[RMDB]
RNA sequence: GGGAACGACUCGAGUAGAGUCGAAAAAAUACGAGCGUAAUCGCGUCUUGACGUGAGUGGGCCUAGACUGUAGGCUAUAUAGCCCAAGUGUGCAUAGCGCACAAUACGCUGAUCUACAGUCUUUGAAACACUGACACUAUUUCGAUAGUGUCAGUGUAAAAGAAACAACAACAACAAC
Reactivity to 2A3 in 0.01 (KOAc 150mM, MgCl2 10mM, bicine 150mM(pH8.5), 24C), signal-to-noise 4, nucleotides 027 to 126: a000a000u210a040c080g010a000g000c000g020u010a020a020u040c000g000c000g020u030c070u080u260g130a020c000g020u010g020a040g030u050g000g000g000c000c010u020a030g000a010c000u010g000u010a010g010g000c050u020a030u000a010u050a300g000c010c000c010a040a050g040u030g000u000g010c070a190u110a220g080c020g000c030a000c000a020a010u050a010c010g000c020u020g000a050u020c000u000a000c000a010g010u000c000u060u050u060g100a070a050
Reactivity to DMS in 0.01 (KOAc 150mM, MgCl2 10mM, bicine 150mM(pH8.5), 24C), signal-to-noise 5, nucleotides 027 to 126: a060a060u010a030c140g000a040g020c010g020u000a060a140u000c010g010c010g010u000c050u010u010g010a030c010g020u000g000a030g010u000g000g000g010c020c100u010a050g010a030c000u000g010u000a000g000g010c300u000a070u000a080u000a090g010c000c000c010a030a180g000u000g020u000g020c010a160u010a170g010c120g010c000a000c010a060a100u000a010c030g010c000u000g000a060u000c010u000a000c010a010g000u000c000u000u000u010g000a140a070
This 177-nucleotide RNA was probed chemically with 2A3 and DMS. The reactions ran in a buffer of 150 mM KOAc, 10 mM MgCl2 and 150 mM bicine (pH 8.5), at 24 C. The data come from the RNA Mapping Database (RMDB), library M2PK90. DMS adducts were read by reverse transcription with MarathonRT. Values cover nucleotides 27 to 126.